Annotation: An RNA of 207 nucleotides, treated with DMS and 2A3 and read out base by base. 2A3 adducts were read by reverse transcription with SuperScript II with manganese. Reactivities are given for positions 27 through 156.
RNA sequence: GGGAACGACUCGAGUAGAGUCGAAAACAGAGAGCUCACGUCUCAGCUCCCACCACCCCUUCUAAUACCCACAGCAGCACCUGGAGUUGGGGCCUGGGCAGGAAUCCAGUCUACCAGAAAAGAAAUGAGCGCAGGCUGAGCGCCAUGUGCGAGGCUACUCAUUAAAUGAGUUCGCUCAUUUAAUGAGAAAAGAAACAACAACAACAAC
Reactivity to DMS in 0.01 (KOAc 150mM, MgCl2 10mM, bicine 150mM(pH8.5), 24C), signal-to-noise 1, nucleotides 027 to 156: c050a180g010a140g000a090g040c010u010c010a060c100g050u010c020u000c070a140g000c010u010c010c010c030a080c070c070a150c000c010c040c050u000u010c050u000a150a190u000a060c040c020c010a090c030a050g030c070a120g030c000a090c030c050u000g020g010a070g050u000u000g030g030g020g040c050c010u000g000g040g070c010a050g030g030a180a180u010c020c000a050g000u000c030u000a100c040c010a140g000a100a090a050a140g010a100a050a100u020g000a040g080c020g000c000a120g030g000c000u020g000a120g010c090g030c010c000a010u010g010u010g010c060g020a190g000g000c010u010a160
Reactivity to 2A3 in 0.01 (KOAc 150mM, MgCl2 10mM, bicine 150mM(pH8.5), 24C), signal-to-noise 2, nucleotides 027 to 156: c060a020g130a010g000a010g110c010u030c010a070c030g040u000c020u000c030a010g040c010u010c020c000c010a070c020c030a060c000c010c050c020u020u090c020u130a140a110u070a160c040c010c000a040c020a050g040c000a020g090c020a030c150c020u010g000g030a060g020u040u010g030g010g000g000c000c020u010g010g010g040c030a020g000g100a000a020u030c040c020a030g030u030c020u060a070c030c040a030g070a070a140a000a000g110a030a090a090u130g020a040g020c020g000c030a010g080g010c040u020g040a050g060c040g030c000c000a060u130g040u070g030c020g010a030g000g050c010u030a020
The DMS profile rests on 1,598 reads. The reactions ran in a buffer of 150 mM KOAc, 10 mM MgCl2 and 150 mM bicine (pH 8.5), at 24 C. The 2A3 profile rests on 1,299 reads.